Conditions: 150 mM KOAc, 10 mM MgCl2 and 150 mM bicine (pH 8.5), 24 C. This 177-nucleotide RNA was probed chemically with 2A3 and DMS. 2A3 adducts were read by reverse transcription with SuperScript II with manganese. Reactivities are given for positions 27 through 126.
RNA sequence: GGGAACGACUCGAGUAGAGUCGAAAAGGAUCCUACCUAGUCAGGACGGUAACUGCCUCCUGUACAGUUACCCCUGACUAGGAUGGUUGUCAUUGUACAGGAGGAUGGCUAGAUGAAAUUAGGAUCGCUAGUAGUGAGUAUUCGUACUUACUACUAGAAAAGAAACAACAACAACAAC
Reactivity to 2A3 in 0.01 (KOAc 150mM, MgCl2 10mM, bicine 150mM(pH8.5), 24C), signal-to-noise 9, nucleotides 027 to 126: g030g000a010u000c000c000u010a070c000c000u000a000g000u000c000a000g010g080a130c160g030g000u010a020a010c010u010g040c010c040u150c030c060u100g110u170a030c000a000g000u000u000a000c000c000c000c000u000g000a010c000u000a000g000g000a000u010g010g000u110u070g010u000c020a040u020u100g130u160a150c080a140g070g100a040g090g010a100u020g010g000c030u050a050g020a250u170g110a080a090a090u120u040a030g010g000a010u000c010g000
Reactivity to DMS in 0.01 (KOAc 150mM, MgCl2 10mM, bicine 150mM(pH8.5), 24C), signal-to-noise 9, nucleotides 027 to 126: g010g000a010u000c000c000u000a100c020c000u000a000g000u000c000a010g010g010a150c200g020g000u000a010a010c010u000g010c110c060u010c200c170u000g010u010a190c010a010g000u000u000a010c010c010c000c000u000g000a020c010u000a000g000g000a030u000g010g010u000u000g010u000c020a070u000u000g010u010a110c180a110g000g010a080g010g010a030u000g000g010c020u000a070g000a150u010g010a070a070a130u010u000a020g010g010a020u000c010g010